[RMDB]
RNA sequence: GGGAACGACUCGAGUAGAGUCGAAAACAGGCCGACCCGGUUGAGUUUGGGGAGCUUGUCGCUGGUCGAGGACUUAACGCUGAAGAGGGGACUAGGCCAUCCCUACACAAACUGGUCGGGGUCUGGAGCCGAUCCCCUGACGAGCCCAAGGCAGGGCGAGACUAGGCGGGUUCGCCCGCCUAGUCUCAAAAGAAACAACAACAACAAC
Reactivity to 2A3 in 0.01 (KOAc 150mM, MgCl2 10mM, bicine 150mM(pH8.5), 24C), signal-to-noise 1, nucleotides 027 to 156: c060a010g040g000c020c000g020a010c040c000c000g050g060u100u180g150a140g060u000u090u170g020g000g000g000a000g020c050u110u060g000u080c040g030c220u060g050g020u050c000g000a030g000g000a030c030u170u080a110a000c220g040c100u090g020a210a010g010a250g100g000g000g010a010c020u030a030g030g000c020c000a010u000c000c000c000u010a010c220a000c000a040a160a000c020u100g030g010u050c100g010g050g000g000u130c150u100g080g080a030g030c070c030g020a070u060c020c010c010c010u160g030a060c030g060a000g030c000c010c010a090a040g000g050c010a030g010g000g000c060
The record gives the reactivity of an RNA of 207 nucleotides to 2A3. It was measured as part of the RMDB library VIROID. The 2A3 profile rests on 529 reads. Reactivities are given for positions 27 through 156.